[RMDB]
RNA sequence: GGGAACGACUCGAGUAGAGUCGAAAAGAUAUGGAUGUUGAUGAUCGACGAUCCGUAGUCAGUGACGUAACAUCGUUCGGAAACGAACGUGGUCACUGACUACGGGGAGAUCGCAACAUCCUAAGUCGUAACGGCGUGUGUUCGCACACGCCGUUACAAAAGAAACAACAACAACAAC
Reactivity to 2A3 in 0.01 (KOAc 150mM, MgCl2 10mM, bicine 150mM(pH8.5), 24C), signal-to-noise 1, nucleotides 027 to 126: g110a030u240a060u300g000g010a000u010g030u010u000g170a300u130g010a000u000c000g300a300c040g010a170u000c020c000g010u000a010g000u070c000a000g000u000g040a000c050g030u150a150a080c120a300u300c100g020u000u050c030g000g050a110a130a070c020g000a020a020c010g000u050g010g010u010c020a000c020u010g010a030c000u000a000c120g000g000g000g000a000g030a000u000c000g000c000a010a020c000a000u020c000c010u000a060a010g150u120c000